[RMDB]
RNA sequence: GGGAACGACUCGAGUAGAGUCGAAAACCCACCAAGUUCUUAUGAAGAGAAGCAGAGGGACUGGCCCGACGAAGCUUCAGCAACCGGUGUAAUGGCGAAAGCCAUGACCAAGGUGCUAAAUCCAGCAAGCUCGAACAGCUUGGAAUAUAAGAACAGAGAGUAGGUAGGUAUUCGUACCUACCUACUCAAAAGAAACAACAACAACAAC
Reactivity to DMS in 0.01 (KOAc 150mM, MgCl2 10mM, bicine 150mM(pH8.5), 24C), signal-to-noise 2, nucleotides 027 to 156: c000c000c020a140c120c030a130a130g000u000u000c010u010u000a010u020g000a190a160g000a290g010a050a050g020c040a100g030a130g030g000g020a210c060u020g030g000c080c020c000g000a150c140g000a130a120g000c040u000u000c010a080g000c000a060a030c020c010g000g120u020g010u010a030a020u000g000g060c000g000a120a080a240g000c020c000a020u000g000a060c000c030a130a110g030g000u000g000c010u020a040a050a100u000c040c020a010g000c000a030a040g030c020u020c030g000a110a260c130a130g000c000u000u020g000g020a160a080u010a040u000a000a060g020a040a030c060a130g000a250
Reactivity to 2A3 in 0.01 (KOAc 150mM, MgCl2 10mM, bicine 150mM(pH8.5), 24C), signal-to-noise 4, nucleotides 027 to 156: c020c000c000a020c010c050a130a060g010u010u010c000u020u010a030u050g060a070a080g060a010g000a060a000g000c010a000g000a010g010g000g000a010c010u010g020g060c000c000c000g100a150c000g000a030a000g000c000u000u000c020a000g000c000a030a060c000c000g010g030u070g110u180a100a080u010g000g000c000g050a080a010a000g000c000c000a000u020g010a010c010c010a030a070g000g000u000g000c000u000a010a020a030u020c000c000a020g130c000a150a000g000c000u090c170g140a140a060c030a060g000c000u010u000g010g010a010a010u080a000u000a030a010g000a010a000c010a030g140a000